Source information
Conditions: 150 mM KOAc, 10 mM MgCl2 and 150 mM bicine (pH 8.5), 24 C. This 177-nucleotide RNA was probed chemically with 2A3 and DMS. It was measured as part of the RMDB library TTRDEL. For DMS the reverse transcriptase was MarathonRT. 2A3 adducts were read by reverse transcription with SuperScript II with manganese. The 2A3 profile rests on 5,471 reads.
RNA sequence: GGGAACGACUCGAGUAGAGUCGAAAAGAUAUGGAUAGCUGGGAGGAACUACACUGAUGGAUCGGAAACGAUCCAGAGGUGCCGAAGAACAGCUAUCCUAAGUCAAAUCCAUAGUUCGCUAUGGAAACUAUGCAUUCAUGUUCGCAUGAAUGCAUAGAAAAGAAACAACAACAACAAC
Reactivity to 2A3 in 0.01 (KOAc 150mM, MgCl2 10mM, bicine 150mM(pH8.5), 24C), signal-to-noise 2, nucleotides 027 to 126: g000a010u080a020u140g000g010a010u010a000g020c000u030g000g010g050a040g050g020a120a050c120u200a060c260a000c040u030g000a050u030g000g020a000u020c010g000g000a050a100a020c020g000a000u000c020c010a000g000a000g010g010u010g000c010c020g160a220a040g010a060a020c000a000g000c000u000a000u020c000c000u000a040a010g000u010c030a090a050a110u010c000c010a000u000a010g020u040u080c300g020c180u020a000u000g000g000a000a010a040
Reactivity to DMS in 0.01 (KOAc 150mM, MgCl2 10mM, bicine 150mM(pH8.5), 24C), signal-to-noise 3, nucleotides 027 to 126: g010a040u000a300u010g000g000a010u000a000g020c000u000g000g000g020a190g000g030a080a060c090u000a160c020a020c000u000g010a300u010g000g010a010u000c000g010g010a160a080a140c000g020a000u000c000c000a000g000a300g000g010u000g000c000c040g000a110a120g010a230a180c010a000g010c000u000a000u000c010c000u000a030a030g010u010c040a100a130a160u000c000c000a020u000a020g000u000u030c300g020c000u000a010u000g000g000a040a070a240